[RMDB]
RNA sequence: GGGAACGACUCGAGUAGAGUCGAAAAGAAAGACGGUUCGCCGUCUUUCAAAUCCUAAGUCGAGAGGCGUGUAAGGAGCUUUGAUCUAUCGGAAACGAUAGGGAGCUCUAUCACGCUAGUCUCGAUAUGGAAAAAGUCAGGAGCUUCGGCUCCUGACCUGAUACGUAAGAUUCGUCUUACGUAUCAGAAAAGAAACAACAACAACAAC
Reactivity to 2A3 in 0.01 (KOAc 150mM, MgCl2 10mM, bicine 150mM(pH8.5), 24C), signal-to-noise 2, nucleotides 027 to 156: g000a000a000a000g000a000c000g020g030u040u090c180g020c090c010g010u020c010u010u000u000c000a010a000a020u000c000c000u030a140a010g030u000c000g000a000g000a000g010g030c100g020u010g010u050a210a300g040g010a000g000c020u300u200u060g070a070u000c000u010a000u000c000g080g000a160a030a040c020g010a000u000a010g000g020g000a000g000c000u000c000u000a030u060c000a000c000g000c000u000a000g010u000c000u000c000g000a000u000a060u100g000g030a020a100a090a040a020g010u030c000a010g000g000a000g000c000u090u170c290g090g000c010u040c020c000u000g010a000c010
Reactivity to DMS in 0.01 (KOAc 150mM, MgCl2 10mM, bicine 150mM(pH8.5), 24C), signal-to-noise 1, nucleotides 027 to 156: g010a020a040a030g000a020c000g020g050u000u000c300g060c030c000g050u010c000u000u000u000c000a090a110a140u010c020c000u000a130a240g000u000c000g010a040g020a060g000g020c030g060u000g010u000a130a300g010g010a010g010c010u000u000u010g010a110u010c000u000a000u000c000g010g000a180a060a290c020g020a010u000a000g000g000g000a000g000c000u000c000u000a100u000c000a040c030g000c000u000a020g010u000c020u010c020g030a020u020a090u000g000g000a090a110a060a070a140g000u030c000a030g000g010a050g050c000u000u000c300g030g040c000u000c000c000u000g000a010c000